[RMDB]
RNA sequence: GGGAACGACUCGAGUAGAGUCGAAAACACCGAGUCGUGGAUGGGUUUCUCCGAGCAACCCACGUACGAGAACGCCGCCGAGAUCGCUUCGACCUUAGUGGAUGCGUUCCUGCUCGGCACCGACAACCGGGACUGAUAUUUUCGAAUAUCAGUCCCGAAAAGAAACAACAACAACAAC
Reactivity to DMS in 0.01 (KOAc 150mM, MgCl2 10mM, bicine 150mM(pH8.5), 24C), signal-to-noise 1, nucleotides 027 to 126: c070a160c040c000g000a010g000u000c030g040u010g000g000a130u000g010g020g000u000u000u000c090u000c070c070g000a050g000c070a080a090c030c000c030a080c100g000u000a040c040g000a120g000a030a070c080g010c020c030g020c050c000g000a000g000a040u000c000g040c240u000u000c060g020a020c000c010u010u000a070g040u000g000g020a090u010g000c020g010u000u000c000c130u020g040c010u010c000g000g000c110a080c060c000g020a030c050a010a040c170
Reactivity to 2A3 in 0.01 (KOAc 150mM, MgCl2 10mM, bicine 150mM(pH8.5), 24C), signal-to-noise 2, nucleotides 027 to 126: c050a000c000c010g000a010g040u000c020g010u030g050g120a300u050g070g030g000u020u050u000c130u000c030c050g050a030g030c010a040a010c020c020c020a020c040g060u150a030c020g030a040g040a160a010c020g000c010c020g040c030c000g010a010g020a050u010c040g030c300u270u250c090g070a040c000c020u110u110a070g090u100g040g100a110u150g010c020g000u010u010c000c030u010g020c000u010c010g000g040c020a020c000c090g000a010c020a020a020c020